[RMDB]
RNA sequence: GGGAACGACUCGAGUAGAGUCGAAAAGCCGUGCUCGAGAGGGAGCAGAAAAAGCAGAGCUAUCCCGUCGUUUCGCUAAACAAAUGCGAAACGACAAAUUGCGUUACAUACGCAAUCCUCUAAUGAAAUCUCUAUUGGUGUUCGCACCAAUAGAGAUAAAAGAAACAACAACAACAAC
Reactivity to DMS in 0.01 (KOAc 150mM, MgCl2 10mM, bicine 150mM(pH8.5), 24C), signal-to-noise 4, nucleotides 027 to 126: g020c010c050g020u000g000c020u000c030g000a070g010a060g010g010g000a040g030c000a150g020a030a040a070a070a090g000c090a080g010a120g000c060u000a120u000c010c010c010g000u000c010g010u000u000u000c000g010c000u010a070a070a120c300a130a060a070u000g010c000g020a000a010a010c010g010a000c020a010a020a020u000u000g000c000g000u000u010a130c260a100u010a020c010g000c010a020a040u000c030c020u000c010u000a100a110u010g010a030a060
Reactivity to 2A3 in 0.01 (KOAc 150mM, MgCl2 10mM, bicine 150mM(pH8.5), 24C), signal-to-noise 4, nucleotides 027 to 126: g000c000c010g110u040g000c010u010c020g070a030g010a010g030g070g020a010g000c020a000g210a020a190a020a020a000g110c120a030g030a010g050c010u030a050u080c010c010c020g000u000c000g000u000u000u000c000g000c000u010a140a160a130c070a040a080a010u100g000c000g000a000a010a000c010g000a000c000a000a060a000u010u010g000c000g020u020u110a180c080a130u250a030c050g000c000a010a010u000c010c020u030c020u050a050a090u130g090a060a100

Structure probing data (DMS and 2A3) for a 177-nucleotide construct. The reactions ran in a buffer of 150 mM KOAc, 10 mM MgCl2 and 150 mM bicine (pH 8.5), at 24 C. For 2A3 the reverse transcriptase was SuperScript II with manganese. For 2A3, 6,466 sequencing reads were counted.